[RMDB]
RNA sequence: GGGAACGACUCGAGUAGAGUCGAAAAACGGAUGGUACGCCAUCCGACCAUUGGGUAGAAGCGUUCAAUCAGCACCGUGACGGUGCAGAUGGGAAAUUGCCCAUGAUACGCACCAAACGUGGUGCGAAAAAGCCAUCGGUGUUCGCACCGAUGGCAAGAGUCUCGUACAGUUCGCUGUACGAGACUCAAAAGAAACAACAACAACAAC
Reactivity to 2A3 in 0.01 (KOAc 150mM, MgCl2 10mM, bicine 150mM(pH8.5), 24C), signal-to-noise 1, nucleotides 027 to 156: a010c000g010g010a010u000g000g010u030a030c250g010c010c000a000u040c000c030g000a020c040c030a060u050u060g000g000g000u090a030g010a190a010g060c050g080u000u000c020a040a040u010c030a030g040c070a000c000c030g190u210g180a110c220g090g000u020g000c020a030g000a000u020g100g000g000a020a140a050u020u010g030c000c000c000a010u010g030a000u030a010c000g000c000a000c000c000a130a120a030c180g070u110g040g010u000g010c000g010a020a000a000a000a000g000c000c000a000u000c010g040g010u000g130u120u120c200g060c110a000c000c000g000a000u000g000g000c000a010a010